[RMDB]
RNA sequence: GGGAACGACUCGAGUAGAGUCGAAAAAUCAACAGACGCUGCGGGCGCAGUUCGCGAAUCGCCACAAUGUCGUUUUCCGGCGCGCUGCCGCCAUCGAUGACAACCCAGUUGCCCUUCGGCUGCGCCGUAAUACUCCCCAGUUCGCUGGGGAGUAUUAAAAAGAAACAACAACAACAAC
Reactivity to DMS in 0.01 (KOAc 150mM, MgCl2 10mM, bicine 150mM(pH8.5), 24C), signal-to-noise 5, nucleotides 027 to 126: a050u040c090a100a090c070a100g010a060c080g000c010u010g010c050g000g000g010c020g000c040a080g010u010u010c080g010c040g000a070a080u010c070g000c050c050a060c100a120a060u020g000u010c010g000u010u000u010u010c040c020g000g000c020g000c050g000c070u030g000c050c030g020c050c030a050u010c130g000a040u010g000a040c070a050a150c040c050c020a120g000u010u010g010c020c030c030u020u010c000g000g010c000u010g010c030g000c000c020g000
Reactivity to 2A3 in 0.01 (KOAc 150mM, MgCl2 10mM, bicine 150mM(pH8.5), 24C), signal-to-noise 6, nucleotides 027 to 126: a000u140c050a030a060c030a040g120a070c050g050c080u100g020c050g050g020g010c020g010c010a000g020u150u120c070g010c010g120a020a040u040c020g020c030c030a050c030a050a110u140g000u030c010g000u030u030u040u030c020c010g000g000c010g000c020g050c150u160g050c050c010g010c010c020a030u050c030g080a060u060g010a010c010a030a080c000c040c010a040g030u020u050g050c030c020c020u040u040c020g010g000c010u040g000c030g000c000c000g010